[RMDB]
RNA sequence: GGGAACGACUCGAGUAGAGUCGAAAACUCUUGGGAUUAUGAGCAAUUUUGAAUAUCCUUUAGCUCAUACUGUGGCCGCGUUGCUCACAGGCAGCUAUACAAUCACCCAAUUUACUCACAACGGGCAGGGAGAUCGAUAAUUCGUUAUCGAUCUCCCAAAAGAAACAACAACAACAAC
Reactivity to DMS in 0.01 (KOAc 150mM, MgCl2 10mM, bicine 150mM(pH8.5), 24C), signal-to-noise 1, nucleotides 027 to 126: c000u000c000u000u000g000g000g000a070u000u000a070u010g000a000g000c000a100a030u000u000u070u000g020a070a080u000a070u000c100c150u010u010u010a060g000c110u000c190a000u020a300c000u000g000u000g000g000c030c010g040c300g120u050u000g050c000u000c010a030c020a010g000g000c170a070g040c130u000a000u050a050c200a130a010u000c180a070c000c000c000a100a150u000u020u000a080c000u000c000a010c060a020a060c250g000g000g000c250a110
Reactivity to 2A3 in 0.01 (KOAc 150mM, MgCl2 10mM, bicine 150mM(pH8.5), 24C), signal-to-noise 4, nucleotides 027 to 126: c010u000c000u030u070g050g030g030a060u040u050a050u160g070a050g040c010a050a140u060u090u140u240g180a230a080u150a070u170c110c000u000u040u090a010g000c010u000c000a010u040a120c030u030g000u010g040g000c000c070g210c020g170u090u280g020c040u060c050a020c000a030g000g000c000a000g000c000u060a040u030a170c090a040a110u100c130a080c000c010c000a000a000u040u050u120a080c040u020c010a030c020a020a100c040g050g000g010c020a040
Overview: An RNA of 177 nucleotides, treated with DMS and 2A3 and read out base by base. The DMS profile rests on 992 reads. It was measured as part of the RMDB library OK1LIB.